[RMDB]
RNA sequence: GGGAACGACUCGAGUAGAGUCGAAAACGCUGGGCACCUGUUUACCCAGAUGUAGGGAGCUCUCUGAAGCGCGCACGGAGAGCGAAGAACUACAUCUGGAAGUAAACUGCGUAGGAUAGUGCCUGUGCUGAAGCGCGCACGGCAACCGAAAGGUGCGGAUUGAAUAGGACUUCGGUCCUAUUCAAUCAAAAGAAACAACAACAACAAC
Reactivity to DMS in 0.01 (KOAc 150mM, MgCl2 10mM, bicine 150mM(pH8.5), 24C), signal-to-noise 2, nucleotides 027 to 156: c040g020c060u000g000g030g050c000a020c020c060u010g000u000u000u000a010c020c000c000a000g000a010u000g020u000a010g000g000g000a090g030c000u000c010u000c000u000g000a090a040g010c010g020c010g020c000a300c040g000g000a040g020a030g010c000g020a070a120g030a140a300c010u000a050c000a020u010c010u000g000g020a020a080g040u000a000a030a010c030u010g020c120g040u000a130g010g000a220u000a020g030u010g030c030c000u000g010u000g010c050u000g000a080a040g000c020g000c050g000c000a300c010g030g030c000a070a050c050c010g020a120a120a180g010g010u010g020c000g030
Reactivity to 2A3 in 0.01 (KOAc 150mM, MgCl2 10mM, bicine 150mM(pH8.5), 24C), signal-to-noise 4, nucleotides 027 to 156: c010g000c020u030g000g010g000c010a010c010c050u020g010u000u000u000a000c000c000c000a000g000a000u000g000u000a010g010g000g010a010g000c000u000c000u000c000u020g060a240a080g010c000g010c000g010c010a010c000g010g000a020g000a000g010c000g000a050a010g000a000a000c000u000a000c000a000u000c000u000g000g000a050a000g000u000a000a010a000c010u060g060c130g230u190a120g070g110a140u150a170g000u000g000c000c000u000g010u000g000c000u030g020a150a050g000c010g000c000g000c010a000c000g010g000c000a000a010c010c010g030a060a030a020g000g010u020g000c030g040